The record gives the reactivity of an RNA of 177 nucleotides to DMS. Source: RMDB library OK2TST, as collected in RNAgym. Conditions: 150 mM KOAc, 10 mM MgCl2 and 150 mM bicine (pH 8.5), 24 C. The DMS profile rests on 1,330 reads.
RNA sequence: GGGAACGACUCGAGUAGAGUCGAAAAGCCAGCCAUGUUAGGCUCCUUGUUUGUCGAAUUUCAGUUAUCGCUAACUGUGGGUUUAUAAUAACGGAAGUUGCAGCGAAGUAAAGCAAAUUACAUGUUAACAAUCCACACGUUUCGACGUGUGGAUUGUAAAAGAAACAACAACAACAAC
Reactivity to DMS in 0.01 (KOAc 150mM, MgCl2 10mM, bicine 150mM(pH8.5), 24C), signal-to-noise 2, nucleotides 027 to 126: g000c050c030a160g060c120c010a080u010g010u010u010a050g010g010c010u000c020c010u000u000g010u010u000u000g010u000c040g010a060a070u000u010u000c040a050g010u000u000a050u010c110g010c140u000a040a020c020u000g030u000g030g030g030u000u010u010a080u010a110a080u010a030a050c030g020g000a040a020g040u000u000g000c050a100g010c060g010a020a070g060u000a050a080a120g010c120a040a050a130u000u010a040c130a100u010g000u010u010a080